[RMDB]
RNA sequence: GGGAACGACUCGAGUAGAGUCGAAAAGAUAUGGAGGCCGAAAGUUAGGGAGAGUGUAACCGCCACUCGGAAACGAGUGGAACUACGGUUAUACACUCGAAGAACUAACUUUCGGCCUCCUAAGUCACAUACUUUUGUCCUUCGGGACAAAAGUAUGAAAAGAAACAACAACAACAAC
Reactivity to DMS in 0.01 (KOAc 150mM, MgCl2 10mM, bicine 150mM(pH8.5), 24C), signal-to-noise 1, nucleotides 027 to 126: g020a060u000a300u000g010g000a040g000g100c010c000g020a000a020a000g000u000u000a000g020g010g000a140g000a030g040u000g020u000a000a070c000c000g070c050c000a020c020u060c000g000g030a090a200a200c000g020a000g000u000g000g010a060a020c160u040a300c020g000g000u000u020a100u000a060c000a010c000u000c000g020a060a070g000a200a230c000u000a000a020c000u000u010u000c000g000g010c090c000u000c000c000u000a000a050g000u010c060a260